[RMDB]
RNA sequence: GGGAACGACUCGAGUAGAGUCGAAAAAGGCACAAACCCGAUGCCUUAGGGAGAGCUAAGGGUUGUAGGAGCUUAGAGAGCCUGUGGAAGGGCGAGCUAACUUCCGAAUCCUAAAACUUCCACUAAGCAUGUAGAUGCUUAGAAGUAGCACCUUCGGCUUCCCUGUGUACUUCGGUACACAGGGAAGAAAAGAAACAACAACAACAAC
Reactivity to 2A3 in 0.01 (KOAc 150mM, MgCl2 10mM, bicine 150mM(pH8.5), 24C), signal-to-noise 1, nucleotides 027 to 156: a030g030g020c040a030c070a080a060a040c010c000c010g000a070u070g000c020c000u020u040a040g010g060g020a100g010a000g030c040u090a080a050g000g000g000u010u000g000u000a010g000g000a000g000c020u010u030a030g020a000g000a020g010c010c020u020g000u050g060g040a070a070g010g040g000c000g010a010g010c020u010a010a010c010u240u070c030c000g010a060a060u090c050c000u000a010a010a010a010c010u010u000c010c000a000c010u010a000a000g000c000a000u040g100u170a090g050a300u000g020c000u000u010a000g000a040a000g100u100a000g000c010a020c060c000u040u020c040g000g000

An RNA of 207 nucleotides, treated with 2A3 and read out base by base.
The 2A3 profile rests on 778 reads.
The RNA was probed in 150 mM KOAc, 10 mM MgCl2 and 150 mM bicine (pH 8.5) at 24 C.
2A3 adducts were read by reverse transcription with SuperScript II with manganese.
Values cover nucleotides 27 to 156.